[RMDB]
RNA sequence: GGGAACGACUCGAGUAGAGUCGAAAAUUGUCCGGGUUCGCCCGGACAAAGCGGGAGGCGACCGGAGGCCUCCUCCCAGGGGAUCCCACGCCUCGCUCCGGAGCGUGAUGACCUUCGGGUCAUCAAAUAGUAUUGAAGUGUUCGCACUUCAAUACUAAAAAGAAACAACAACAACAAC
Reactivity to DMS in 0.01 (KOAc 150mM, MgCl2 10mM, bicine 150mM(pH8.5), 24C), signal-to-noise 4, nucleotides 027 to 126: u000u010g010u000c010c000g030g000g000u000u010c220g000c010c000c000g030g000a000c000a000a000a060g010c210g010g010g000a020g010g000c030g000a080c050c020g000g010a050g020g010c010c000u000c000c020u000c000c000c020a140g010g010g000g000a140u000c030c030c060a110c150g000c030c020u000c060g000c050u000c020c010g020g000a180g020c220g000u000g000a020u000g010a010c000c000u000u010c220g030g010g010u000c000a010u010c000a030a080a120
Reactivity to 2A3 in 0.01 (KOAc 150mM, MgCl2 10mM, bicine 150mM(pH8.5), 24C), signal-to-noise 2, nucleotides 027 to 126: u030u010g000u000c000c010g030g010g020u040u050c220g070c000c000c000g020g030a000c010a000a000a000g020c040g010g020g010a010g010g000c020g030a070c030c010g020g010a020g020g010c000c010u010c010c000u020c000c000c000a020g020g010g010g010a050u090c050c020c010a020c120g040c000c010u080c040g030c010u020c010c010g010g040a030g070c100g060u070g000a010u000g010a000c010c010u020u040c250g060g000g000u010c010a000u000c000a000a010a010
Annotation: Conditions: 150 mM KOAc, 10 mM MgCl2 and 150 mM bicine (pH 8.5), 24 C. The record gives the reactivity of an RNA of 177 nucleotides to DMS and 2A3. 2A3 is a SHAPE reagent: it acylates the 2'-hydroxyl of flexible nucleotides of all four kinds. The DMS profile rests on 4,008 reads.